[RMDB]
RNA sequence: GGGAACGACUCGAGUAGAGUCGAAAAGAUAUGGACAGGUGGAGCUAAUCAAUGAAUUCGGAAACGAAUUGAUUGAUGCCACACCGUCCUAAGUCAAAAGUCACUCUAAGUUCGCUUAGAGUGACAACUAUAGGUAAAAGUUCGCUUUUACCUAUAGAAAAGAAACAACAACAACAAC
Reactivity to DMS in 0.01 (KOAc 150mM, MgCl2 10mM, bicine 150mM(pH8.5), 24C), signal-to-noise 8, nucleotides 027 to 126: g000a020u000a060u010g000g000a000c000a120g030g010u000g010g000a090g010c010u010a040a140u010c000a000a010u000g000a010a010u000u000c000g010g010a020a010a040c000g010a010a000u000u000g000a010u000u000g010a090u010g010c010c050a300c000a010c000c000g000u000c000c000u000a000a070g000u000c010a100a060a120a110g000u000c000a000c000u000c000u000a010a010g000u000u000c260g010c010u000u000a000g000a020g010u000g010a000c000a010a050
Reactivity to 2A3 in 0.01 (KOAc 150mM, MgCl2 10mM, bicine 150mM(pH8.5), 24C), signal-to-noise 9, nucleotides 027 to 126: g000a000u010a000u050g020g000a030c180a220g030g030u020g000g030a050g020c250u300a110a140u090c000a000a000u030g130a040a010u020u000c000g000g010a000a010a010c000g010a010a000u000u040g070a000u010u020g040a110u300g000c000c000a000c000a000c000c000g000u000c000c000u000a010a010g010u000c000a020a040a110a090g010u000c000a000c000u000c000u010a010a020g020u060u130c230g140c170u010u000a000g000a000g000u000g000a000c000a000a000